An RNA of 207 nucleotides, treated with 2A3 and read out base by base. Reactivities are given for positions 27 through 156. The reactions ran in a buffer of 150 mM KOAc, 10 mM MgCl2 and 150 mM bicine (pH 8.5), at 24 C. For 2A3 the reverse transcriptase was SuperScript II with manganese.
[RMDB]
RNA sequence: GGGAACGACUCGAGUAGAGUCGAAAAGUGUUCCAGUUCGCUGGAACACAAAAAAGCGUACUACGACAUGUGUGCUAAUCUCGAUUCCCAAAUAGGAAUCGAUCUUAGACCCACACAACAGCGUAUCGCAAAAAAGAGGGAUGUUCGCAUCCCUCAAGUGGAACACAGUGUUCGCACUGUGUUCCACAAAAGAAACAACAACAACAAC
Reactivity to 2A3 in 0.01 (KOAc 150mM, MgCl2 10mM, bicine 150mM(pH8.5), 24C), signal-to-noise 1, nucleotides 027 to 156: g000u030g000u000u000c000c000a010g060u020u130c300g050c100u000g000g000a000a000c010a000c120a040a020a020a020a020a020g040c010g000u020a040c080u000a010c000g150a000c060a060u020g000u000g000u010g030c020u010a000a000u030c000u000c010g000a000u000u010c040c000c060a100a300a060u270a000g000g000a010a000u000c000g010a000u000c010u000u000a140g010a220c020c020c020a000c000a000c030a000a190c060a010g010c000g000u030a080u300c080g000c150a000a210a000a000a000a000g060a000g020g020g000a000u060g010u110u190c280g020c090a000u000c000c070c010u000c000a000a000